RNA sequence: GGGAACGACUCGAGUAGAGUCGAAAACGAUACUGCAUUGAUCGCCCGUAGACUAUAACAGCAUCGCUAGGUCGAUGCUUGUAGUCUAUAUUAGUGGUCGACCUAGCUACUAUGGCGAUCAAUGCAAGGUACUGGAUGAUUUCGAUCGUCUAGUACCAAAAGAAACAACAACAACAAC
Reactivity to 2A3 in 0.01 (KOAc 150mM, MgCl2 10mM, bicine 150mM(pH8.5), 24C), signal-to-noise 9, nucleotides 027 to 126: c040g020a040u130a180c060u050g000c000a000u000u000g000a000u000c000g010c020c040c030g010u000a000g010a030c030u040a030u070a220a140c110a060g030c010a020u030c020g020c060u140a090g050g130u220c000g000a000u000g000c000u000u010g000u000a010g010u000c040u010a050u000a000u020u030a010g010u010g140g030u090c040g040a150c020c060u080a030g010c000u010a010c000u010a030u090g000g000c000g000a000u000c000a000a000u000g000c000a000a000
Reactivity to DMS in 0.01 (KOAc 150mM, MgCl2 10mM, bicine 150mM(pH8.5), 24C), signal-to-noise 7, nucleotides 027 to 126: c060g010a130u050a100c170u000g010c000a010u000u000g010a000u000c000g010c010c000c300g000u000a010g000a110c030u000a010u010a060a070c300a030g010c070a020u010c050g010c010u020a120g030g020u040c000g010a010u000g010c010u000u000g000u000a010g000u000c050u030a030u000a030u030u000a000g010u000g000g000u010c040g000a070c160c100u030a110g000c010u000a020c020u000a030u010g000g010c000g010a020u000c000a000a010u000g010c000a000a000

Structure probing data (2A3 and DMS) for a 177-nucleotide construct. For 2A3, 113,566 sequencing reads were counted. Reactivities are given for positions 27 through 126. For 2A3 the reverse transcriptase was SuperScript II with manganese. The DMS profile rests on 20,235 reads. Source: RMDB library OK1LIB, as collected in RNAgym. DMS (dimethyl sulfate) methylates the pairing face of unpaired adenines and cytosines.